[RMDB]
RNA sequence: GGGAACGACUCGAGUAGAGUCGAAAAAACGCGAAAGUCGGACGGCGGCCAUGAGUCGCAACGCAAAGCCUCGGCAAGUGGAGUUAGCGAGAAGAGACUAGGCUUUGGUUUCUUCAAGUGAAGCGGUAAAAGGUUCGAGACUUCGGUCUCGAACCAAGUUCUGUUUUCUGUUCGCAGAAAACAGAACAAAAGAAACAACAACAACAAC
Reactivity to 2A3 in 0.01 (KOAc 150mM, MgCl2 10mM, bicine 150mM(pH8.5), 24C), signal-to-noise 1, nucleotides 027 to 156: a000a000c160g020c060g020a130a160a040g080u120c050g040g030a100c070g070g010c010g000g020c020c020a230u240g020a020g070u030c010g000c010a060a010c000g010c040a060a000a050g010c000c020u050c000g040g000c050a130a090g060u040g070g050a040g020u140u080a010g060c010g030a020g010a060a010g080a000g010a010c020u050a030g000g120c000u100u090u050g010g020u040u010u020c000u030u010c040a020a040g010u080g050a050a010g060c040g000g040u070a020a070a050a140g020g000u010u020c010g000a010g000a000c010u050u090c270g090g000u010c000u000c010g000a000a000c010c000a000a000

Structure probing data (2A3) for a 207-nucleotide construct. 2A3 adducts were read by reverse transcription with SuperScript II with manganese. The RNA was probed in 150 mM KOAc, 10 mM MgCl2 and 150 mM bicine (pH 8.5) at 24 C. The 2A3 profile rests on 541 reads.